[RMDB]
An RNA of 170 nucleotides, treated with DMS and 2A3 and read out base by base.
For DMS the reverse transcriptase was MarathonRT.
The DMS profile rests on 9,614 reads.

RNA sequence: GGGAACGACUCGAGUAGAGUCGAAAAGCAGCUGUUGAUGCUUUGUGUGAAAAAGCUUUUAAAUAUUUGAACAUUGCUAAAUGUUCCCGUAUCAUUCCUGCAAAGGCACGUGUUGAGUGCUAUGACAUAACGGCGUUGUUCGCAACGCCGAAAAGAAACAACAACAACAAC
Reactivity to DMS in 0.01 (KOAc 150mM, MgCl2 10mM, bicine 150mM(pH8.5), 24C), signal-to-noise 3, nucleotides 027 to 129: g050c030a010g030c150u020g040u010u020g010a090u030g000c040u020u040u000g020u050g050u070g050a040a010a090a080a070g010c020u010u000u080u000a110a110a030u040a020u000u000u000g000a030a030c070a050u060u000g040c150u040a000a000a000u040g020u020u020c020c090c120g000u020a010u030c090a130u000u000c020c030u000g000c140a000a000a000g070g000c020a020c030g070u020g070u000u010g010a070g020u050g000c050u040a100u040g020a020c080a000u070a010a050
Reactivity to 2A3 in 0.01 (KOAc 150mM, MgCl2 10mM, bicine 150mM(pH8.5), 24C), signal-to-noise 2, nucleotides 027 to 129: g010c000a000g000c010u050g000u000u000g050a020u050g060c000u010u080u120g150u020g020u030g010a110a050a000a000a000g000c000u000u000u100u100a090a080a020u220a060u100u010u120g020a020a000c000a010u040u130g040c050u170a100a000a060u160g000u000u000c000c000c000g020u000a000u040c060a030u020u040c010c000u030g000c020a000a010a170g040g010c000a000c030g120u170g190u150u020g090a100g000u000g000c030u060a050u000g010a040c000a060u160a070a000